[RMDB]
RNA sequence: GGGAACGACUCGAGUAGAGUCGAAAAGUAGUGGAGAAGAAAGAAGUGGAAACACUUCGCGCACGACCACUACAACGUGCGCAGUAUUGGAGUGUUUGAGGGAGAACCUCAAGCACUCCAGUACAAAGAGCAGUAUCCAGUUCGCUGGAUACUGCUCAAAAGAAACAACAACAACAAC
Reactivity to 2A3 in 0.01 (KOAc 150mM, MgCl2 10mM, bicine 150mM(pH8.5), 24C), signal-to-noise 4, nucleotides 027 to 126: g070u070a000g020u050g040g100a160g040a240a080g110a070a240a000g030a010a000g000u000g030g020a030a020a030c010a000c000u000u000c000g000c000g040c000a000c010g030a060c000c030a050c030u030a020c020a020a000c020g030u030g000c030g000c020a010g000u000a000u010u000g000g000a010g000u000g000u020u000u000g010a000g000g050g010a200g060a240a260c010c000u000c000a000a000g010c010a000c000u000c000c000a000g000u000a000c000a010a050a010
Reactivity to DMS in 0.01 (KOAc 150mM, MgCl2 10mM, bicine 150mM(pH8.5), 24C), signal-to-noise 1, nucleotides 027 to 126: g000u000a010g050u000g030g000a210g010a000a040g010a160a140a040g010a000a000g030u000g000g040a240a090a180c000a010c000u000u000c000g020c060g000c030a040c010g000a140c000c060a050c000u040a070c020a150a100c060g000u000g000c020g060c070a150g000u000a000u010u000g010g020a000g000u000g010u000u000u000g000a000g010g000g010a170g040a070a120c020c020u010c000a010a020g000c000a000c000u000c000c010a000g000u000a000c000a080a160a130